[RMDB]
RNA sequence: GGGAACGACUCGAGUAGAGUCGAAAAUGCUCUGACGCCGAGUGGGAAAGCUUUCCGCACUUACGGCAGAGGCUUUUGUUGGUUGGACGCCUUCGCCAAGUAUGGCAAAGUUAUCCCAGCCUCCGUCUGCUUUACUCGUUUUCGAACGAGUAAAGCAAAAAGAAACAACAACAACAAC
Reactivity to DMS in 0.01 (KOAc 150mM, MgCl2 10mM, bicine 150mM(pH8.5), 24C), signal-to-noise 3, nucleotides 027 to 126: u010g010c020u000c020u000g000a030c010g020c060c080g030a060g030u010g000g000g010a010a080a230g010c130u000u000u000c000c000g010c030a010c020u000u000a080c140g010g000c010a020g010a030g010g030c010u010u000u000u000g010u000u000g020g000u020u010g010g000a080c180g010c230c020u000u000c070g010c000c000a040a140g010u010a070u010g020g010c160a010a000a020g000u000u000a170u000c080c010c010a030g000c040c000u010c030c010g000u000c040
Reactivity to 2A3 in 0.01 (KOAc 150mM, MgCl2 10mM, bicine 150mM(pH8.5), 24C), signal-to-noise 1, nucleotides 027 to 126: u110g030c000u010c010u020g050a020c010g120c250c120g040a000g000u000g010g000g010a000a000a090g060c040u070u060u000c010c030g100c010a000c000u040u090a010c040g000g000c010a010g000a000g000g050c020u070u080u030u120g150u090u120g070g050u050u090g000g000a010c040g000c010c010u000u010c010g000c010c020a040a030g090u050a120u130g010g020c050a010a000a010g010u020u040a040u110c000c000c000a020g030c020c000u030c010c010g040u000c030
Chemical mapping of a 177-nucleotide RNA with DMS and 2A3. It was measured as part of the RMDB library OK2TST.